[RMDB]
RNA sequence: GGGAACGACUCGAGUAGAGUCGAAAAAUCUAGCGUCCCUAACCGGAACCGCUGACCACCACCGCGUGGUGGGUGGAGCCAAACGUCCCGUUCCGCGCUUGGGUGUCUUGACAGUGACGAUUAUUCAAAUGCAACAGCGAUUCGUCGCUGUUGCAUUAAAAGAAACAACAACAACAAC
Reactivity to DMS in 0.01 (KOAc 150mM, MgCl2 10mM, bicine 150mM(pH8.5), 24C), signal-to-noise 2, nucleotides 027 to 126: a060u120c060u090a040g000c170g040u040c040c040c030u040a180a110c100c140g010g000a000a090c010c080g000c000u000g020a080c000c020a110c000c030a030c090c090g000c290g000u040g000g000u000g000g040g010u020g020g020a120g000c020c090a030a070a210c100g010u010c000c000c000g030u060u000c000c000g000c020g000c010u000u000g000g000g020u010g000u040c120u000u030g000a030c040a080g010u010g000a080c040g000a050u000u000a030u010u000c130a070

Conditions: 150 mM KOAc, 10 mM MgCl2 and 150 mM bicine (pH 8.5), 24 C. An RNA of 177 nucleotides, treated with DMS and read out base by base. DMS adducts were read by reverse transcription with MarathonRT.